RNA sequence: GGGAACGACUCGAGUAGAGUCGAAAACGGUCGCGCUGUUCGGCAAUGGCAGUCAGUGGGUCGGCCCCAUCACCAACUUCAGCCCCGCCUACAACGAUCGGACCAUCGAGUUGUGUCACGGCGACGAGUGUAAGUCGACUUUCGAGUCGACUUACACAAAAGAAACAACAACAACAAC
Reactivity to 2A3 in 0.01 (KOAc 150mM, MgCl2 10mM, bicine 150mM(pH8.5), 24C), signal-to-noise 1, nucleotides 027 to 126: c020g000g020u020c030g010c010g010c090u030g030u110u000c000g000g020c000a120a210u160g140g020c010a010g020u050c000a000g020u140g000g040g000u060c050g070g000c020c000c000c020a030u110c040a010c050c010a060a060c050u060u080c070a030g030c000c000c000c010g050c020c010u040a010c020a100a020c000g040a040u000c050g010g000a090c110c000a070u080c040g020a040g020u030u040g040u050g060u080c040a020c020g000g080c020g030a090c050g020a020
Reactivity to DMS in 0.01 (KOAc 150mM, MgCl2 10mM, bicine 150mM(pH8.5), 24C), signal-to-noise 2, nucleotides 027 to 126: c090g010g000u000c030g030c050g020c020u000g010u000u000c150g000g050c060a090a110u020g010g000c010a070g030u000c080a030g020u000g010g010g000u000c060g020g000c050c010c000c070a050u010c030a090c060c050a060a070c070u050u000c090a110g000c000c010c130c090g000c020c020u010a050c100a020a050c050g000a070u000c060g010g000a150c070c070a090u020c060g010a110g000u000u010g000u000g010u020c050a070c120g000g000c050g020a070c040g000a090